An RNA of 177 nucleotides, treated with DMS and 2A3 and read out base by base. The reactions ran in a buffer of 150 mM KOAc, 10 mM MgCl2 and 150 mM bicine (pH 8.5), at 24 C.
RNA sequence: GGGAACGACUCGAGUAGAGUCGAAAAAUGUUCUGGAUUCAAUUGCUGAUCCCUCUGGCCGCCUUGAUUGUAGUGACUCGCCUGCUCAAGUGCGUGUGCUGUGUAGUGCCUUUUUUAGUCGUGGCCGGCCAUCUAUGUAUUUCGAUACAUAGAUGGCAAAAGAAACAACAACAACAAC
Reactivity to DMS in 0.01 (KOAc 150mM, MgCl2 10mM, bicine 150mM(pH8.5), 24C), signal-to-noise 5, nucleotides 027 to 126: a080u010g010u000u000c040u000g000g010a120u010u000c080a070a120u010u010g010c090u000g000a090u000c020c020c030u000c060u010g020g010c030c030g010c030c020u000u010g010a070u010u000g000u000a050g010u000g010a100c070u000c070g010c110c030u000g000c060u000c060a060a060g010u010g020c040g010u000g020u010g010c010u000g010u010g010u000a050g010u000g000c030c020u010u000u000u000u010u010a080g010u000c050g020u000g000g010c020c040g020
Reactivity to 2A3 in 0.01 (KOAc 150mM, MgCl2 10mM, bicine 150mM(pH8.5), 24C), signal-to-noise 1, nucleotides 027 to 126: a000u140g000u090u030c010u050g050g040a100u110u080c060a040a120u160u170g030c040u070g020a090u020c000c000c000u010c030u030g050g000c020c020g030c000c020u060u060g050a090u070u120g050u070a060g020u010g100a070c020u020c050g030c010c020u020g030c010u020c070a060a070g040u050g120c020g050u090g030u050g020c020u000g030u010g040u070a030g040u050g060c000c000u090u110u030u020u020u150a040g020u060c050g000u020g010g060c040c000g040